[RMDB]
RNA sequence: GGGAACGACUCGAGUAGAGUCGAAAAUGGAACCGCAGUUGGUUCCUCGGAACUAAACUCGUGGUUCCUGUGGUUCACACCUGACCUCCUGAGCAGAAAAGAAAAAAGAAGACGGCUCGGAGGAGCGCGACUAUAUAUCCUUCGGGAUAUAUAGUCGAAAAGAAACAACAACAACAAC
Reactivity to 2A3 in 0.01 (KOAc 150mM, MgCl2 10mM, bicine 150mM(pH8.5), 24C), signal-to-noise 3, nucleotides 027 to 126: u050g000g000a000a000c000c000g020c010a000g000u030u020g000g010u000u000c000c010u000c120g070g000a020a010c000u130a280a070a020c020u110c180g020u000g010g030u000u000c000c010u010g000u050g000g050u120u130c070a060c020a050c110c030u090g120a140c010c000u000c010c030u170g000a000g000c040a000g160a110a130a160a040g160a020a290a050a090a020a020g100a080a000g090a070c110g060g000c000u000c010g020g000a010g020g000a020g030c130g000
Reactivity to DMS in 0.01 (KOAc 150mM, MgCl2 10mM, bicine 150mM(pH8.5), 24C), signal-to-noise 4, nucleotides 027 to 126: u000g000g000a020a020c010c000g040c010a040g000u000u000g010g010u000u000c000c020u010c290g020g010a010a000c000u000a030a030a020c010u000c150g060u000g000g010u000u000c000c000u000g020u000g000g000u000u000c120a120c120a120c050c040u010g010a140c010c000u000c000c000u000g020a030g020c020a090g000a080a080a070a130g010a030a050a080a110a150a110g000a100a130g010a230c220g010g010c000u000c010g000g020a040g020g000a040g020c180g010

The data come from the RNA Mapping Database (RMDB), library VIROID. An RNA of 177 nucleotides, treated with 2A3 and DMS and read out base by base. The RNA was probed in 150 mM KOAc, 10 mM MgCl2 and 150 mM bicine (pH 8.5) at 24 C. For 2A3 the reverse transcriptase was SuperScript II with manganese.